[RMDB]
An RNA of 177 nucleotides, treated with 2A3 and DMS and read out base by base. Conditions: 150 mM KOAc, 10 mM MgCl2 and 150 mM bicine (pH 8.5), 24 C. The data come from the RNA Mapping Database (RMDB), library OK1LIB. The 2A3 profile rests on 3,321 reads.

RNA sequence: GGGAACGACUCGAGUAGAGUCGAAAAGGCUAUAGCUCAACACUACCUGGUGCAGUUCCUGCCGAACAAACGUUACCAGGAAGCCUCUGUGGUGGUUGCAGUGGACGGCGAAACCUUCAGUAGCCGUUGUUCUCUUUCAGUUCGCUGAAAGAGAACAAAAAGAAACAACAACAACAAC
Reactivity to 2A3 in 0.01 (KOAc 150mM, MgCl2 10mM, bicine 150mM(pH8.5), 24C), signal-to-noise 5, nucleotides 027 to 126: g060g000c060u080a040u130a230g010c010u050c040a030a050c010a050c050u090a080c010c000u030g000g000u020g000c030a030g020u010u040c030c020u080g120c060c040g050a050a030c020a100a140a030c150g130u170u160a060c020c000a000g010g010a010a010g000c050c000u060c050u090g110u110g060g050u040g020g060u060u070g020c020a010g010u020g030g040a020c010g010g000c000g030a030a030a050c030c000u110u080c040a040g020u030a020g010c000c020g020u020
Reactivity to DMS in 0.01 (KOAc 150mM, MgCl2 10mM, bicine 150mM(pH8.5), 24C), signal-to-noise 4, nucleotides 027 to 126: g010g010c020u000a090u030a130g000c000u010c110a070a240c090a060c020u020a270c020c020u000g000g000u000g000c070a100g000u020u000c020c090u030g000c080c100g000a040a050c060a070a020a120c200g000u010u000a040c010c040a040g010g020a100a080g000c020c020u000c080u000g010u040g000g010u000g000g040u000u020g010c180a030g030u000g010g010a230c160g000g000c000g030a080a070a100c050c040u050u020c110a060g000u000a140g000c010c000g000u030